[RMDB]
RNA sequence: GGGAACGACUCGAGUAGAGUCGAAAAGACUGCGUGCACUAGAGACGAUAUCGAGCCGGAAAUUAAUCGAUAAUGUCUCUCGUAGUGGAUACGAUCCGGCAAGUAUCGACUACCUGUGCUCGUAGGAAGCGACCAUCGAUUUCGAUCGAUGGUCGCUAAAAGAAACAACAACAACAAC
Reactivity to 2A3 in 0.01 (KOAc 150mM, MgCl2 10mM, bicine 150mM(pH8.5), 24C), signal-to-noise 1, nucleotides 027 to 126: g110a000c000u010g000c000g000u000g010c000a000c060u070a010g000a000g000a010c000g000a020u000a000u060c000g030a030g020c000c000g030g180a100a170a190u270u300a050a200u230c000g000a020u000a010a040u100g020u000c000u010c000u000c000g000u010a010g010u000g260g000a000u000a000c030g000a060u000c000c000g020g020c060a090a000g000u000a000u010c000g050a000c010u040a070c000c030u050g000u010g020c000u000c000g000u000a000g020g000a010